[RMDB]
RNA sequence: GGGAACGACUCGAGUAGAGUCGAAAAAAAAAGCAAAACCGAUCGCGAAGGCUACAUGGGGUAAGGCAAGCAGGAUAGAUAAACUGUUUUCUAUGCGCUUCCAGCGAGGAUGAAACCAAAAUCGCUAGGCAUACUAUAGUUUCGACUAUAGUAUGCCAAAAGAAACAACAACAACAAC
Reactivity to 2A3 in 0.01 (KOAc 150mM, MgCl2 10mM, bicine 150mM(pH8.5), 24C), signal-to-noise 2, nucleotides 027 to 126: a020a010a010a020a000g140c130a100a090a020a030c040c020g040a050u030c030g000c030g110a070a030g000g000c030u050a040c040a070u150g000g030g020g000u040a040a030g020g040c010a000a010g000c010a020g000g060a030u090a080g070a010u130a120a060a030c040u040g080u050u050u050u030c000u030a070u100g090c050g020c040u050u000c020c000a000g030c000g000a010g040g000a020u090g050a060a060a070c040c040a110a010a030a030u020c020g010c040u040a060
Reactivity to DMS in 0.01 (KOAc 150mM, MgCl2 10mM, bicine 150mM(pH8.5), 24C), signal-to-noise 3, nucleotides 027 to 126: a020a020a070a050a100g040c060a060a040a050a090c090c040g000a070u000c070g020c050g010a080a060g000g000c030u000a040c090a040u000g010g010g000g000u000a060a060g010g010c080a040a040g020c030a060g030g000a080u000a030g020a060u000a070a060a060c150u000g000u000u010u000u000c030u000a050u000g000c110g000c030u000u000c070c020a090g030c010g000a030g010g010a120u010g000a090a040a120c080c040a020a020a060a070u000c070g000c090u020a100